[RMDB]
Structure probing data (DMS and 2A3) for a 207-nucleotide construct. DMS (dimethyl sulfate) methylates the pairing face of unpaired adenines and cytosines. Conditions: 150 mM KOAc, 10 mM MgCl2 and 150 mM bicine (pH 8.5), 24 C. For DMS, 3,119 sequencing reads were counted.
RNA sequence: GGGAACGACUCGAGUAGAGUCGAAAACGGUCUGCGCCACGAAGUCCGGUUCUAAAACUUAGUGGAUCGCCAAGGAAAGGCCUGUCAAUUGGCAUAGUCCAAGGUUAAAACUUAAAAUUAAUUGACUACACAUGUAGAACUGUCUGUGGACGGCUUGCAUGUAGUGACUCUUCGGAGUCACUACAUGAAAAGAAACAACAACAACAAC
Reactivity to DMS in 0.01 (KOAc 150mM, MgCl2 10mM, bicine 150mM(pH8.5), 24C), signal-to-noise 2, nucleotides 027 to 156: c040g000g020u000c040u000g010c030g020c030c000a000c000g000a060a020g010u000c020c000g040g000u010u000c110u000a060a040a070a050c000u000u000a050g020u000g000g020a020u000c030g010c030c040a060a300g000g020a070a140a130g000g010c000c000u000g000u000c020a040a070u000u020g010g040c040a080u000a100g010u010c030c010a030a250g000g000u000u000a050a030a060a100c100u000u000a020a040a070a080u000u000a030a040u000u000g010a090c000u000a070c020a070c090a110u000g010u010a100g020a050a050c050u000g020u000c010u010g060u030g010g050a090c050g010g000c010u000u000g010
Reactivity to 2A3 in 0.01 (KOAc 150mM, MgCl2 10mM, bicine 150mM(pH8.5), 24C), signal-to-noise 4, nucleotides 027 to 156: c000g000g010u010c020u040g040c100g010c080c010a000c040g040a010a000g020u020c000c010g010g030u100u070c100u180a090a100a080a090c080u100u080a040g000u000g000g010a000u020c010g000c010c010a010a000g000g010a030a040a000g020g000c000c010u010g000u010c000a010a030u020u010g000g010c010a020u030a010g010u000c000c000a000a020g000g000u020u040a010a010a020a090c060u130u140a070a040a010a000u040u050a010a010u000u010g010a010c010u130a010c030a010c010a050u170g060u180a050g070a200a060c060u060g040u080c030u040g080u090g090g020a020c050g040g030c000u020u050g020